[RMDB]
RNA sequence: GGGAACGACUCGAGUAGAGUCGAAAAAACGUAACUGAACGCGGAGACGUCGGCAGGAGUCCUGGGAAGAGUUCUCUUUUCUUCUUGACGGCCUAUCACCCUGAAAUCGGUUUGUCCGGAGCUAGGGCCUGCAGAUCUUUUUCGAAAGAUCUGCAGGAAAAGAAACAACAACAACAAC
Reactivity to DMS in 0.01 (KOAc 150mM, MgCl2 10mM, bicine 150mM(pH8.5), 24C), signal-to-noise 2, nucleotides 027 to 126: a070a000c120g060u020a040a080c060u010g000a080a050c110g000c040g050g000a070g040a020c140g000u010c080g000g020c050a020g010g000a160g000u030c050c040u050g000g000g000a030a050g010a080g020u020u010c120u000c030u000u010u000u000c000u000u000c020u010u000g000a140c060g000g020c040c020u000a150u020c090a150c030c000c000u000g000a070a060a050u020c040g000g000u000u010u030g000u050c020c010g000g000a100g000c040u010a070g030g010g000
Reactivity to 2A3 in 0.01 (KOAc 150mM, MgCl2 10mM, bicine 150mM(pH8.5), 24C), signal-to-noise 3, nucleotides 027 to 126: a010a010c100g020u100a030a050c050u070g080a060a040c040g010c010g080g040a050g000a020c040g030u040c030g050g000c000a020g050g040a040g000u000c010c010u020g010g030g050a040a060g010a030g060u180u020c060u000c000u050u040u140u010c000u070u000c000u000u070g040a020c020g040g000c000c010u030a060u060c040a040c040c000c000u020g050a030a100a120u030c020g030g030u020u130u220g080u010c000c000g010g020a010g010c020u030a010g020g020g000
The record gives the reactivity of an RNA of 177 nucleotides to DMS and 2A3. Values cover nucleotides 27 to 126. For DMS, 3,573 sequencing reads were counted. For 2A3 the reverse transcriptase was SuperScript II with manganese. The data come from the RNA Mapping Database (RMDB), library RFM100.